This 170-nucleotide RNA was probed chemically with DMS and 2A3. The data come from the RNA Mapping Database (RMDB), library 15KLIB. Values cover nucleotides 27 to 129. The DMS profile rests on 63,256 reads. For DMS the reverse transcriptase was MarathonRT. The reactions ran in a buffer of 150 mM KOAc, 10 mM MgCl2 and 150 mM bicine (pH 8.5), at 24 C.
RNA sequence: GGGAACGACUCGAGUAGAGUCGAAAAAGGAGUGUUCUGAAGUAGAGGCUUCAGAUUUAGAAGAAGGUGAAUCAGAGUGCAUUUCUGAGACUUCAACUGAACAAGUUGACGUUUCUCAUGAGACUUCGGGCCCUAGUGUUCGCACUAGGGAAAAGAAACAACAACAACAAC
Reactivity to DMS in 0.01 (KOAc 150mM, MgCl2 10mM, bicine 150mM(pH8.5), 24C), signal-to-noise 9, nucleotides 027 to 129: a030g020g010a040g000u020g020u000u000c000u000g000a030a040g030u060a090g030a140g040g010c060u000u000c060a040g000a100u030u030u020a060g000a080a090g030a020a010g030g040u010g000a080a060u010c050a080g020a010g050u020g000c130a130u030u050u020c050u000g000a050g000a060c030u000u040c010a020a040c010u000g000a050a090c180a100a040g000u000u000g020a040c120g000u040u000u020c030u000c030a070u010g020a090g000a080c040u000u010c050g020g000g030
Reactivity to 2A3 in 0.01 (KOAc 150mM, MgCl2 10mM, bicine 150mM(pH8.5), 24C), signal-to-noise 9, nucleotides 027 to 129: a000g120g010a040g010u060g040u110u020c010u000g000a010a000g000u060a050g030a050g120g030c000u020u020c020a040g010a130u090u080u140a080g010a100a010g030a040a030g070g030u100g070a040a050u080c030a020g020a020g070u100g090c050a110u040u130u050c030u030g000a000g010a010c000u000u000c000a000a000c000u030g040a070a030c090a170a030g000u000u000g000a000c010g000u020u120u010c010u000c010a040u150g030a010g020a060c040u050u040c050g030g060g000